Structure probing data (2A3 and DMS) for a 177-nucleotide construct. Reactivities are rounded to 0.1 and cut off at 0 and 3. DMS adducts were read by reverse transcription with MarathonRT. As a SHAPE reagent, 2A3 marks flexible, mostly unpaired nucleotides at the ribose 2'-OH. Source: RMDB libraries RFM100 and RFMREP, as collected in RNAgym. Reactivities are given for positions 27 through 126.
RNA sequence: GGGAACGACUCGAGUAGAGUCGAAAAUUUGGGUGCCCUGCCAUGCCUGUCAUCCAGAAGUUCUUUCUGGCACUGACUCGUGGGGCUUUGCGUUCGCAACGCAUGCUCUGUGGAGUGACGAGGGGAGUCUAUUCGUGAGAUUCGUCUCACGAAUAGAAAAAGAAACAACAACAACAAC
Reactivity to 2A3 in 0.01 (KOAc 150mM, MgCl2 10mM, bicine 150mM(pH8.5), 24C), signal-to-noise 8, nucleotides 027 to 126: u060u030u050g060g010g010u090g020c000c000c010u010g010c010c010a050u080g030c010c010u040g010u050c000a160u280c000c000a010g010a040a020g060u210u130c070u060u100u010c000u020g010g000c020a040c030u010g010a010c000u020c020g030u060g000g000g010g020c000u070u050u020g010c000g010u020u090c080g000c120a050a010c010g000c010a010u040g000c000u000c000u010g070u070g100g040a090g030u070g040a040c060g040a090g010g010g000g000a020g040
Reactivity to DMS in 0.01 (KOAc 150mM, MgCl2 10mM, bicine 150mM(pH8.5), 24C), signal-to-noise 6, nucleotides 027 to 126: u010u020u000g010g010g020u010g010c020c010c010u010g010c030c030a060u010g010c030c030u000g000u010c010a030u030c000c000a010g000a010a020g010u040u030c160u020u010u010c000u000g000g000c080a030c050u000g010a010c000u010c080g000u020g000g000g000g010c010u010u010u000g010c010g000u000u010c300g000c190a140a080c010g010c000a020u000g010c000u000c010u000g000u010g020g010a120g000u020g010a060c070g000a080g020g000g000g000a180g000